[RMDB]
RNA sequence: GGGAACGACUCGAGUAGAGUCGAAAAUACCUUGAGUAUUGCUGAAUUCAGUUUAGCGUGCAUGCUCUUGGCUACUCUCAUAGUGAUUGUCAAAUUUGGAGUUACUUAUUCGUCAAUUCAAUAUUUAAAAAGGUGCCGAUGUUCGCAUCGGCACCAAGACAUUCUAACGGUUCGCCGUUAGAAUGUCAAAAGAAACAACAACAACAAC
Reactivity to 2A3 in 0.01 (KOAc 150mM, MgCl2 10mM, bicine 150mM(pH8.5), 24C), signal-to-noise 1, nucleotides 027 to 156: u090a030c000c010u010u010g000a010g040u010a140u130u180g010c000u040g030a120a130u120u070c070a110g060u100u110u050a090g060c090g030u160g050c000a030u000g000c000u000c000u000u020g000g000c000u030a050c040u000c000u000c000a040u040a060g050u070g050a070u000u080g000u030c000a040a020a020u060u050u040g070g030a250g120u100u030a030c020u030u040a030u030u080c000g000u020c010a000a030u000u030c030a030a080u070a300u190u260u300a170a080a030a010a020g050g000u010g000c000c000g000a000u000g090u120u180c250g000c040a020u020c000g000g000c000a000c000c000a000a000
The data come from the RNA Mapping Database (RMDB), library M2RFPK. This 207-nucleotide RNA was probed chemically with 2A3. 2A3 adducts were read by reverse transcription with SuperScript II with manganese.